[RMDB]
RNA sequence: GGGAACGACUCGAGUAGAGUCGAAAAUUCAACCCCAAAAAUCUAGUGCAAAUAUUGUCUUAAUUACUUAGGCUAAAAGAAAUAAGUAUUAAAGCGGGACAAGGCAUCGACAUUUUAUACAAAUAUUUUUAGCAUAUUAGAUUCGUCUAAUAUGCAACGCUUAUUCUAGUUUCGACUAGAAUAAGCGAAAAGAAACAACAACAACAAC
Reactivity to 2A3 in 0.01 (KOAc 150mM, MgCl2 10mM, bicine 150mM(pH8.5), 24C), signal-to-noise 1, nucleotides 027 to 156: u160u030c070a070a050c020c000c020c000a110a090a000a000a030u130c090u150a020g020u010g100c030a000a060a250u120a070u120u000g000u000c010u070u230a130a150u170u000a030c010u000u020a010g040g040c020u220a230a040a040a000g050a030a130a000u040a010a010g040u040a000u040u120a260a080a060g100c080g050g020g010a010c000a010a000g110g010c010a040u040c050g080a010c020a060u080u140u090u120a170u070a110c030a040a110a050u080a240u180u130u140u190u150a040g000c000a000u000a000u000u010a000g000a000u000u080c040g000u000c070u000a000a000u000a000u000g000c000a000a000